An RNA of 207 nucleotides, treated with 2A3 and DMS and read out base by base. For 2A3 the reverse transcriptase was SuperScript II with manganese. For DMS, 3,733 sequencing reads were counted. Conditions: 150 mM KOAc, 10 mM MgCl2 and 150 mM bicine (pH 8.5), 24 C.
[RMDB]
RNA sequence: GGGAACGACUCGAGUAGAGUCGAAAACUGAACGGUGCAGCAGUGAUGGAUGCAGCUCUUCUGUUGAUAGGUAAAUACCUCACAAUUGGUUUGGACAAAUCAAUGUGGAACAAAUCCAAGAUGAAAUAUUUAAAGGGGAACUAAGGCCUUUAAGGAAUCCAUAGCUAGGAUUCGUCCUAGCUAUGGAAAAAGAAACAACAACAACAAC
Reactivity to 2A3 in 0.01 (KOAc 150mM, MgCl2 10mM, bicine 150mM(pH8.5), 24C), signal-to-noise 2, nucleotides 027 to 156: c050u050g040a030a000c060g050g000u020g010c020a010g000c010a000g040u040g040a060u080g020g050a040u050g010c020a070g000c010u070c040u090u010c030u030g060u030u090g080a110u060a040g000g010u080a090a160a030u110a050c030c020u000c030a020c050a130a210u000u030g000g080u010u010u040g080g070a060c040a030a020a000u020c020a000a030u050g000u000g030g010a080a030c040a040a100a010u090c050c000a000a020g030a050u070g070a090a130a070u050a090u030u160u300a040a030a030g010g010g010g000a110a000c030u070a040a060g030g050c020c010u040u010u030a090a010g070g060a090a100
Reactivity to DMS in 0.01 (KOAc 150mM, MgCl2 10mM, bicine 150mM(pH8.5), 24C), signal-to-noise 2, nucleotides 027 to 156: c040u010g000a060a090c050g010g020u010g020c040a100g000c010a050g010u000g000a200u010g030g020a100u000g030c060a130g020c020u000c020u000u000c150u000g000u000u000g030a090u000a070g000g000u020a060a050a160u010a090c040c000u000c030a040c070a050a150u000u000g020g040u010u010u010g010g050a150c120a040a050a070u000c030a030a060u000g010u000g020g000a050a100c050a040a130a080u000c020c010a050a160g000a110u020g010a070a070a090u010a100u000u000u010a050a050a060g010g000g020g040a070a100c100u020a090a080g000g030c000c030u000u000u010a030a090g010g010a110a170